An RNA of 177 nucleotides, treated with 2A3 and DMS and read out base by base. For 2A3 the reverse transcriptase was SuperScript II with manganese. For DMS the reverse transcriptase was MarathonRT. Conditions: 150 mM KOAc, 10 mM MgCl2 and 150 mM bicine (pH 8.5), 24 C. Reactivities are given for positions 27 through 126.
[RMDB]
RNA sequence: GGGAACGACUCGAGUAGAGUCGAAAACUACAGGGUCCGCGUUCCAUCCUUUCUUACCUGAUGGCCGGCAUGGUCCCAGCCUCCUCGCUGGCGCCGGCUGGGCAACAUUCCGAGGGGACCGUCCCCCGGUUUAUAUGUGGUUCGCCACAUAUAAACCAAAAGAAACAACAACAACAAC
Reactivity to 2A3 in 0.01 (KOAc 150mM, MgCl2 10mM, bicine 150mM(pH8.5), 24C), signal-to-noise 2, nucleotides 027 to 126: c010u080a040c030a070g010g030g030u020c010c010g150c090g080u020u020c010c000a070u010c020c000u040u210u040c030u120u100a150c040c050u060g080a080u030g130g010c020c020g010g000c020a050u100g000g030u060c000c000c000a000g000c010c020u110c010c020u050c030g050c050u030g030g000c050g000c010c020g060g000c000u010g020g010g020c020a060a060c000a090u090u000c050c000g000a070g030g000g000g010a020c040c020g040u030c000c000c000c000c000
Reactivity to DMS in 0.01 (KOAc 150mM, MgCl2 10mM, bicine 150mM(pH8.5), 24C), signal-to-noise 2, nucleotides 027 to 126: c040u010a060c070a120g020g000g000u000c030c120g020c180g040u000u000c010c010a170u000c040c060u010u010u010c060u000u000a130c130c070u000g020a090u000g020g020c100c010g000g000c010a090u030g010g020u010c290c000c000a070g000c030c040u000c160c040u000c110g000c020u010g000g010c200g010c040c010g010g000c020u000g000g010g000c030a080a060c060a060u000u010c080c060g010a090g020g000g010g030a150c090c060g000u010c000c000c000c050c130